[RMDB]
RNA sequence: GGGAACGACUCGAGUAGAGUCGAAAAUGACAAAGGAGCUGCCAGCAGUAAGCCUGACUCGGUCGCACCAGUUCCGCUGUGCGUUCGCCUACGAAGGCAACGUACGGUGUUGAGGCCCUGUCCGCCGCUGCGCUGCCACCUACUCUCGCGCCGCUAGGUGCGCUUAGCGGUUCGCCGCUAAGCGCACAAAAGAAACAACAACAACAAC
Reactivity to 2A3 in 0.01 (KOAc 150mM, MgCl2 10mM, bicine 150mM(pH8.5), 24C), signal-to-noise 1, nucleotides 027 to 156: u100g020a000c030a030a100a030g050g000a040g030c020u070g000c010c000a000g000c010a010g000u060a030a020g050c000c000u010g030a030c000u000c040g010g000u010c020g030c040a080c060c000a020g110u170u030c040c000g050c000u010g000u000g000c010g000u000u080c150g000c000c010u150a220c250g190a270a060g010g000c000a000a000c000g030u030a040c020g000g000u090g000u050u160g010a090g010g000c000c000c100u040g000u030c000c040g020c030c000g000c050u090g040c100g020c070u060g020c020c010a130c010c000u030a040c000u000c030u030c070g040c020g000c010c030g110c150u180a100g000
Source: RMDB library VIROID, as collected in RNAgym. An RNA of 207 nucleotides, treated with 2A3 and read out base by base. 2A3 adducts were read by reverse transcription with SuperScript II with manganese. The RNA was probed in 150 mM KOAc, 10 mM MgCl2 and 150 mM bicine (pH 8.5) at 24 C.